An RNA of 207 nucleotides, treated with 2A3 and read out base by base. Values cover nucleotides 27 to 156. The RNA was probed in 150 mM KOAc, 10 mM MgCl2 and 150 mM bicine (pH 8.5) at 24 C. The 2A3 profile rests on 1,529 reads. High 2A3 reactivity points to a flexible backbone, as in loops and unpaired stretches.
[RMDB]
RNA sequence: GGGAACGACUCGAGUAGAGUCGAAAAGGGGUCAGAGCUCGACGAGGUUGAGACAUGUUCUGAAGCCUCCACGGAACAACAGCUCAACUACCCACCGUCGAGAUCUCUGACGGAGGCACCCAAAAUCCACCCUGGAUCUUCGGAUCCAGGGUGGAAACGUGUGUAGAAAGUUCGCUUUCUACACACGAAAAGAAACAACAACAACAAC
Reactivity to 2A3 in 0.01 (KOAc 150mM, MgCl2 10mM, bicine 150mM(pH8.5), 24C), signal-to-noise 1, nucleotides 027 to 156: g020g000g030g010u020c010a000g000a010g000c000u000c000g010a000c000g000a020g040g000u000u010g010a010g010a070c140a250u240g040u000u030c000u040g040a090a010g000c000c000u020c010c000a000c010g010g010a030a000c040a010a040c060a140g070c000u000c010a010a010c000u080a050c040c100c080a060c040c010g000u000c000g000a100g000a090u100c000u000c000u000g020a020c000g000g000a000g010g000c000a010c010c000c000a030a180a000a040u010c000c000a000c000c000c000u010g000g000a000u000c030u040u100c300g050g000a010u020c010c000a010g030g000g000u000g000g000a000a000a000